[RMDB]
RNA sequence: GGGAACGACUCGAGUAGAGUCGAAAAUGAGAAGUCGUCAGUAGUUCGACGUGAGCAGAAGCCCGCCUCGAUAUGGUAUGUGGACGAGGGCAUGCCCAAGACACACCUUAACCCUAGCGGGACGCAAACUCAGGAAGCAGUUCGCUGCUUCCUGAGUAAAAGAAACAACAACAACAAC
Reactivity to DMS in 0.01 (KOAc 150mM, MgCl2 10mM, bicine 150mM(pH8.5), 24C), signal-to-noise 2, nucleotides 027 to 126: u000g010a030g000a150a120g000u000c030g010u000c000a170g010u000a130g010u000u010c080g020a030c010g030u000g000a120g000c040a120g010a130a260g010c000c000c000g010c010c000u010c010g000a120u000a030u000g010g000u000a030u000g020u000g000g000a120c030g000a300g030g010g010c050a080u000g020c020c000c000a070a180g000a070c000a010c010a020c050c020u000u000a050a090c050c000c030u000a160g000c040g010g000g020a090c080g000c090a070a080
This 177-nucleotide RNA was probed chemically with DMS.
It was measured as part of the RMDB library M2PK90.
The DMS profile rests on 1,095 reads.